[RMDB]
An RNA of 177 nucleotides, treated with DMS and 2A3 and read out base by base. For DMS, 1,802 sequencing reads were counted.
RNA sequence: GGGAACGACUCGAGUAGAGUCGAAAACGAGUAAAUCAAAGCCUCAUUUCACACACACACGAGAAUCGAAACGAUUACUCUAGAAGGAUAGGUUUCAUCCCUUCUUCCUGUCCGUUCCUGACGUUGACUAAGUUUUGUUGUUCGCAACAAAACUUAGAAAAGAAACAACAACAACAAC
Reactivity to DMS in 0.01 (KOAc 150mM, MgCl2 10mM, bicine 150mM(pH8.5), 24C), signal-to-noise 3, nucleotides 027 to 126: c150g010a100g000u000a030a080a070u020c080a110a140a170g020c080c000u020c040a120u000u000u030c040a080c040a040c110a080c110a040c090a050c120g030a050g010a070a030u000c030g000a090a120a090c100g000a030u000u000a090c000u000c030u000a100g000a070a030g000g000a030u010a050g000g000u010u010u000c120a090u010c090c020c030u000u010c020u000u000c000c040u000g000u000c020c020g000u010u000c000c010u010g000a100c180g000u000u020g010a200
Reactivity to 2A3 in 0.01 (KOAc 150mM, MgCl2 10mM, bicine 150mM(pH8.5), 24C), signal-to-noise 2, nucleotides 027 to 126: c070g000a020g080u130a050a150a170u100c110a150a080a000g010c000c010u040c030a060u030u110u090c040a030c000a000c000a000c000a000c010a010c060g030a020g020a080a040u070c090g060a150a140a120c060g010a020u030u040a130c010u020c030u020a050g040a110a010g040g030a050u070a070g050g050u020u100u160c040a100u140c020c010c050u040u030c000u020u020c020c020u010g000u040c030c010g030u000u000c000c010u040g060a080c080g110u050u090g020a020

The RNA was probed in 150 mM KOAc, 10 mM MgCl2 and 150 mM bicine (pH 8.5) at 24 C.